This 177-nucleotide RNA was probed chemically with DMS. Conditions: 150 mM KOAc, 10 mM MgCl2 and 150 mM bicine (pH 8.5), 24 C.
RNA sequence: GGGAACGACUCGAGUAGAGUCGAAAACUCGUGAUGGAACACCGUGUCCAGAGGCAAGUCGCAAGUACCCCCUCCACGUUGACGUUAGUGUUUGCGAUUCUUACAAGAAACUCAUAGGAGCUCAAGGCAGGAGUGCUUAUUUCGAUAAGCACUCCUGAAAAGAAACAACAACAACAAC
Reactivity to DMS in 0.01 (KOAc 150mM, MgCl2 10mM, bicine 150mM(pH8.5), 24C), signal-to-noise 2, nucleotides 027 to 126: c030u010c030g040u000g000a130u020g000g020a080a070c040a110c100c120g000u020g000u000c020c000a050g000a110g030g000c100a080a100g010u000c050g050c050a040a030g020u000a170c010c000c040c000c000u000c020c030a050c130g020u000u010g050a090c130g000u000u010a060g010u010g010u010u000u000g000c030g010a090u020u000c020u020u010a110c140a090a100g000a090a030a090c030u000c020a110u000a070g000g000a070g010c070u010c050a040a150g010g050
Background: It was measured as part of the RMDB library OK2TST.